[RMDB]
RNA sequence: GGGAACGACUCGAGUAGAGUCGAAAAUCAAAGCUAUCAACUGAAGCAAUAAGAGGUAAGCUACCUCCCAGCAUUAUGGCAAGCCUCACAGACUUUGCAUCAUCAAGAGGUAAUCCAUAGGCUUGAAGGCUUGGAUGGUCUUCGGACCAUCCAAGCCAAAAGAAACAACAACAACAAC
Reactivity to 2A3 in 0.01 (KOAc 150mM, MgCl2 10mM, bicine 150mM(pH8.5), 24C), signal-to-noise 1, nucleotides 027 to 126: u120c000a040a030a030g000c000u030a100u000c020a090a080c030u170g020a150a000g210c000a060a060u270a180a150g000a000g000g000u030a000a090g000c050u000a000c010c020u010c030c000c000a000g030c030a060u090u000a000u000g000g000c000a110a000g030c000c000u000c000a000c000a000g090a010c020u230u150u300g050c000a090u160c090a140u140c000a190a040g000a000g010g000u200a000a000u000c000c000a000u000a000g060g000c000u000u170g090a000a000

Record summary: Structure probing data (2A3) for a 177-nucleotide construct. Values cover nucleotides 27 to 126. The reactions ran in a buffer of 150 mM KOAc, 10 mM MgCl2 and 150 mM bicine (pH 8.5), at 24 C.